An RNA of 177 nucleotides, treated with 2A3 and DMS and read out base by base.
The RNA was probed in 150 mM KOAc, 10 mM MgCl2 and 150 mM bicine (pH 8.5) at 24 C.
DMS adducts were read by reverse transcription with MarathonRT.
Values are in units of 0.01, from 0 to 300, in steps of 10.
For DMS, 8,969 sequencing reads were counted.
Reactivities are given for positions 27 through 126.
[RMDB]
RNA sequence: GGGAACGACUCGAGUAGAGUCGAAAAAGGGCUGGAUUCGUCCAGCCCUGCACAUUCGUACGCAACGAAGCGUACGUCAUUACGCAAAUGACGAAAAGCGUAGAACCACGGACUUCGGUCCGUGGAAAUACUUAGGCAUGUUCGCAUGCCUAAGUAUAAAAGAAACAACAACAACAAC
Reactivity to 2A3 in 0.01 (KOAc 150mM, MgCl2 10mM, bicine 150mM(pH8.5), 24C), signal-to-noise 5, nucleotides 027 to 126: a000g010g000g020c000u000g010g010a020u060u040c130g040u020c060c000a000g000c000c000c000u000g000c010a020c010a100u080u100c000g000u010a000c000g010c050a190a110c200g230a230a050g000c000g000u010a000c000g000u000c010a050u030u140a000c010g000c030a070a080a170u150g100a060c090g110a050a020a050a030g000c010g000u020a040g040a080a020c000c000a000c000g000g010a000c010u030u070c220g080g010u000c000c000g000u000g000g000a000a030
Reactivity to DMS in 0.01 (KOAc 150mM, MgCl2 10mM, bicine 150mM(pH8.5), 24C), signal-to-noise 7, nucleotides 027 to 126: a010g010g000g020c010u000g010g010a040u000u010c210g020u000c000c000a000g000c000c000c000u000g000c100a080c160a130u010u000c010g010u000a000c010g020c010a130a110c300g010a150a120g000c000g010u000a010c000g010u000c120a060u000u000a020c030g010c030a040a090a060u000g000a080c140g000a050a060a080a140g000c010g000u000a050g020a110a190c000c000a010c000g010g000a010c010u000u000c180g040g010u000c000c010g010u000g000g000a000a040